[RMDB]
RNA sequence: GGGAACGACUCGAGUAGAGUCGAAAACACGCUCCGUACGCGGAGCGUGAAAUAACGCAGGCGUGGGACAACGCCAGAGAUAAACUCAAAUAGUCCCAAUAAACGAUGACCAUACGUGGUCAUCGAAAUCCCCGUAUGCUUUCGAGCAUACGGGGAUAAAAGAAACAACAACAACAAC
Reactivity to 2A3 in 0.01 (KOAc 150mM, MgCl2 10mM, bicine 150mM(pH8.5), 24C), signal-to-noise 4, nucleotides 027 to 126: c010a020c000g000c000u010c010c000g070u060a030c250g000c000g130g020a010g010c010g010u000g000a010a010a000u110a030a020c110g000c180a110g020g010c010g040u100g010g060g000a010c000a280a040c230g010c000c020a010g000a000g000a010u250a110a200a060c020u010c000a000a000a010u070a040g020u000c020c000c000a010a020u190a100a150a000c000g000a000u000g000a000c010c000a020u040a060c260g130u030g010g000u000c000a000u000c000g000a020a000
Reactivity to DMS in 0.01 (KOAc 150mM, MgCl2 10mM, bicine 150mM(pH8.5), 24C), signal-to-noise 1, nucleotides 027 to 126: c000a000c000g010c020u000c000c000g000u000a000c300g150c000g020g000a000g130c000g000u000g000a000a000a000u000a240a110c060g000c250a120g000g030c000g000u000g000g100g000a060c000a020a040c000g030c100c000a130g150a240g000a300u000a030a080a180c000u000c000a230a000a070u010a140g000u000c000c000c000a200a000u100a000a090a090c030g000a000u000g040a040c000c000a000u000a030c100g120u010g000g000u000c000a000u000c000g000a000a030
Chemical mapping of a 177-nucleotide RNA with 2A3 and DMS. For 2A3, 2,676 sequencing reads were counted. Values cover nucleotides 27 to 126. The data come from the RNA Mapping Database (RMDB), library OK1LIB.